[RMDB]
This 177-nucleotide RNA was probed chemically with 2A3 and DMS. The RNA was probed in 150 mM KOAc, 10 mM MgCl2 and 150 mM bicine (pH 8.5) at 24 C. The data come from the RNA Mapping Database (RMDB), library OK1LIB.
RNA sequence: GGGAACGACUCGAGUAGAGUCGAAAAGGUAGUUGAUACCUCUCAUUAGCGAACAGCACCGGUUCGUAGAGGCUGGCUAGGCAACUACCACUGUAUGAUUGGUAGGGACUUGCCUCCACCGUUACAGACAGCUCUAGAUAUUCGUAUCUAGAGCUGUAAAAGAAACAACAACAACAAC
Reactivity to 2A3 in 0.01 (KOAc 150mM, MgCl2 10mM, bicine 150mM(pH8.5), 24C), signal-to-noise 4, nucleotides 027 to 126: g000g000u020a000g000u010u130g040a060u040a040c020c000u000c010u000c000a120u030u140a020g000c010g000a010a010c000a010g140c050a050c000c030g060g000u000u000c010g000u010a010g010a000g040g000c120u020g000g000c010u020a010g000g020c010a000a020c000u000a000c000c010a000c010u000g080u060a100u130g070a080u060u070g000g010u030a050g030g050g000a060c060u010u030g000c000c010u000c000c010a020c010c010g050u010u050a020c010a000g050
Reactivity to DMS in 0.01 (KOAc 150mM, MgCl2 10mM, bicine 150mM(pH8.5), 24C), signal-to-noise 7, nucleotides 027 to 126: g010g000u000a010g010u020u030g000a140u010a060c010c000u000c020u010c100a130u030u030a120g010c010g000a000a010c010a090g020c080a090c110c090g020g000u010u000c000g010u000a070g000a060g000g000c230u000g010g000c240u020a030g000g000c040a080a050c000u000a010c000c000a080c090u000g000u010a050u040g010a100u020u010g010g000u000a030g000g010g000a190c210u020u010g000c030c020u000c010c020a050c060c030g010u000u020a050c160a000g000